[RMDB]
RNA sequence: GGGAACGACUCGAGUAGAGUCGAAAACAUUCAAGAUGCGCCCGCGUCACUAUCUGCCGGAUGACGGCGACGCGAAUGACUACCUGGGCGAAUGGCUUCGCGGAUCGGAGCAGUACGGCCACAUUGCGCGAACAGUCUGCUUCUUGGGCAACACUGGCAAUUACCUAACAUUCGUGUUAGGUAAUUGAAAAGAAACAACAACAACAAC
Reactivity to 2A3 in 0.01 (KOAc 150mM, MgCl2 10mM, bicine 150mM(pH8.5), 24C), signal-to-noise 6, nucleotides 027 to 156: c010a050u090u120c080a070a050g050a090u050g020c030g030c020c040c010g020c020g030u010c010a030c100u160a170u210c100u130g000c020c010g110g040a230u300g050a130c010g030g040c020g000a010c010g010c010g010a040a060u120g020a060c030u070a060c030c050u080g020g010g000c030g030a030a050u060g020g020c010u030u030c030g000c040g080g040a070u130c030g010g020a040g020c010a000g070u080a060c040g050g010c030c000a050c020a140u070u220g070c080g000c010g040a050a020c010a040g050u000c010u030g020c000u030u070c020u050u040g030g030g010c020a080a050c020a040c060u020g060g000
Reactivity to DMS in 0.01 (KOAc 150mM, MgCl2 10mM, bicine 150mM(pH8.5), 24C), signal-to-noise 2, nucleotides 027 to 156: c050a090u000u010c080a130a100g010a120u000g000c000g020c040c100c010g020c000g020u000c020a060c010u010a020u000c030u000g020c040c220g010g000a120u010g000a070c010g010g010c000g010a030c000g010c030g070a060a040u010g010a130c020u000a080c020c010u000g000g000g020c040g000a060a040u000g040g010c020u010u000c020g000c070g040g000a140u000c030g010g020a140g040c000a050g000u000a300c060g100g000c020c030a070c080a170u000u000g000c060g030c040g000a080a070c070a100g010u000c010u010g030c010u000u000c050u010u010g010g010g010c040a040a090c100a080c030u000g000g040